[RMDB]
RNA sequence: GGGAACGACUCGAGUAGAGUCGAAAAGCAAAGAAAUUUUAUCCCAAUAAGGCGAAGUAAGCAAGUGGACCCAACGCGAGGGCGCUAGCGAGCUUACGAGCCCUAGCAGACUAAUAGCGAGAAAAAAUCUUAACAUACCCUUCGGGGUAUGUUAAGAAAAAGAAACAACAACAACAAC
Reactivity to 2A3 in 0.01 (KOAc 150mM, MgCl2 10mM, bicine 150mM(pH8.5), 24C), signal-to-noise 1, nucleotides 027 to 126: g010c060a040a090a060g030a040a230a120u110u160u010u010a100u110c000c010c000a030a060u210a060a000g000g000c000g010a000a070g020u010a010a010g010c010a000a000g000u000g020g180a070c000c000c040a140a060c120g110c110g230a180g040g020g000c190g000c020u010a000g120c020g040a010g000c000u000u000a000c000g030a000g010c000c000c010u000a000g010c010a010g020a130c070u140a040a180u090a180g070c060g040a090g170a220a110a000a000a000a070
Reactivity to DMS in 0.01 (KOAc 150mM, MgCl2 10mM, bicine 150mM(pH8.5), 24C), signal-to-noise 2, nucleotides 027 to 126: g000c130a070a040a040g000a110a080a160u000u000u000u000a130u000c000c000c010a090a100u000a120a060g000g000c010g000a110a230g000u000a000a010g010c030a080a210g020u000g000g010a190c060c020c010a100a040c160g020c150g010a090g010g010g000c060g020c040u000a030g030c020g010a300g020c000u010u000a000c020g010a300g000c000c020c000u010a030g040c070a120g020a130c120u030a070a080u010a150g000c040g000a090g050a000a060a110a060a060a070
The data come from the RNA Mapping Database (RMDB), library M2PK90.
An RNA of 177 nucleotides, treated with 2A3 and DMS and read out base by base.
The reactions ran in a buffer of 150 mM KOAc, 10 mM MgCl2 and 150 mM bicine (pH 8.5), at 24 C.
Reactivities are given for positions 27 through 126.
Reactivities are rounded to 0.1 and cut off at 0 and 3.
The 2A3 profile rests on 546 reads.